[RMDB]
RNA sequence: GGGAACGACUCGAGUAGAGUCGAAAAGGGUGGCCAGUGGGGCCUGGAUGAAGUAAACGAGGUCGGGGCAAUUUCUGCCAGCUGCCAAGCCCAACGCUGGGGAGAGCUUGCAGACCGCAACCGGCCCUCUUUAGAAAGUCUUCGGACUUUCUAAAGAAAAAGAAACAACAACAACAAC
Reactivity to 2A3 in 0.01 (KOAc 150mM, MgCl2 10mM, bicine 150mM(pH8.5), 24C), signal-to-noise 1, nucleotides 027 to 126: g050g020g020u030g030g060c060c020a010g070u120g020g070g070g050c010c010u020g080g010a050u080g040a060a060g070u200a100a020a180c160g070a070g000g000u020c030g000g010g000g040c000a000a060u030u140u010c000u000g020c000c030a020g030c000u020g100c040c000a090a070g040c020c000c000a050a050c140g020c080u090g000g010g010g030a190g030a000g030c000u000u020g000c000a000g030a040c010c090g000c010a090a110c000c020g000g000c000c050c000
Reactivity to DMS in 0.01 (KOAc 150mM, MgCl2 10mM, bicine 150mM(pH8.5), 24C), signal-to-noise 4, nucleotides 027 to 126: g000g010g010u010g000g030c040c040a070g020u000g010g010g000g020c050c010u010g020g000a080u020g000a070a130g000u000a080a070a120c120g010a140g010g030u000c010g010g030g000g010c010a070a120u000u010u000c020u000g010c010c050a030g020c010u010g020c060c040a110a150g000c010c040c130a090a110c240g010c050u000g020g000g000g000a130g010a050g000c020u000u000g020c000a020g020a040c300c140g000c030a030a050c000c010g020g020c010c000c040